[RMDB]
RNA sequence: GGGAACGACUCGAGUAGAGUCGAAAAAGUGGACGAUACAUUACACCGAGCAAUUAAAUUACUGUCCACGCUCGGACAUUAUUCUGGCGAGAGCCAGUUCACAGACAGCUAGCGAAAGGAAGGACCUAGCAGGAAGGAAGGAGCUAGCGCUAGGCCAGAUAUACUGAGCGUUCGCGCUCAGUAUAUCAAAAGAAACAACAACAACAAC
Reactivity to DMS in 0.01 (KOAc 150mM, MgCl2 10mM, bicine 150mM(pH8.5), 24C), signal-to-noise 1, nucleotides 027 to 156: a070g020u000g010g030a080c050g060a190u000a080c070a180u000u000a070c070a160c040c050g040a080g090c010a110a090u000u000a010a040a140u010u020a030c020u010g010u000c010c080a060c090g020c000u000c030g020g020a030c040a060u000u010a030u000u010c010u000g030g020c000g050a240g000a300g020c020c020a010g000u010u000c040a080c080a150g010a090c040a080g010c040u000a110g000c010g030a140a050a070g000g000a050a110g040g000a110c040c010u010a100g040c000a090g010g010a110a060g000g010a120a070g000g010a100g040c020u000a030g020c060g030c020u000a020g000g000c040c050a070
Reactivity to 2A3 in 0.01 (KOAc 150mM, MgCl2 10mM, bicine 150mM(pH8.5), 24C), signal-to-noise 4, nucleotides 027 to 156: a000g010u020g000g010a030c060g030a070u120a220c070a060u150u160a070c070a040c030c010g010a000g000c030a050a130u100u130a150a090a070u150u170a200c040u100g000u010c000c010a000c010g000c000u010c010g020g010a010c000a010u120u300a070u140u040c000u000g010g010c010g020a050g010a000g040c000c000a000g000u060u080c070a060c010a020g090a040c020a020g020c020u040a000g010c030g140a040a030a010g020g070a070a070g020g020a070c000c000u000a000g000c010a010g030g010a060a030g020g010a020a050g000g030a010g010c000u000a000g020c020g020c030u010a010g010g000c000c010a020